[RMDB]
RNA sequence: GGGAACGACUCGAGUAGAGUCGAAAAAGCAUCUGCUGUUCACCGCCGGACAUGGUGCCCGCCCGCUGAAUACGGCGCUCAUGCAGACGUGGAAACAGCUCAUACACCCACUUUAUGCGCUCCUGGAAAUUAAUGCGUGCUUCGGCACGCAUUAAUUAAAAGAAACAACAACAACAAC
Reactivity to 2A3 in 0.01 (KOAc 150mM, MgCl2 10mM, bicine 150mM(pH8.5), 24C), signal-to-noise 1, nucleotides 027 to 126: a000g040c030a030u050c030u030g000c000u030g080u060u090c130a060c180c000g000c090c000g000g060a140c010a010u080g040g010u070g040c000c050c020g030c020c030c050g060c170u200g050a130a040u160a170c030g010g040c030g010c010u030c050a030u050g050c000a030g050a190c050g020u040g030g030a000a030a060c020a000g030c000u020c000a020u080a070c030a140c050c000c050a020c030u000u260u080a180u120g040c050g000c020u070c000c050u010g010g130a030
Reactivity to DMS in 0.01 (KOAc 150mM, MgCl2 10mM, bicine 150mM(pH8.5), 24C), signal-to-noise 1, nucleotides 027 to 126: a120g010c040a040u000c060u000g020c000u000g000u000u000c120a180c130c000g000c010c070g010g040a200c040a030u000g030g010u000g030c040c040c060g010c080c030c060g020c120u000g000a130a120u020a090c060g050g000c120g000c010u000c020a010u000g030c000a150g010a050c130g020u010g010g000a100a070a020c030a040g000c010u000c080a060u040a090c060a110c030c000c010a100c130u000u000u000a070u010g000c030g000c050u000c040c000u000g000g000a100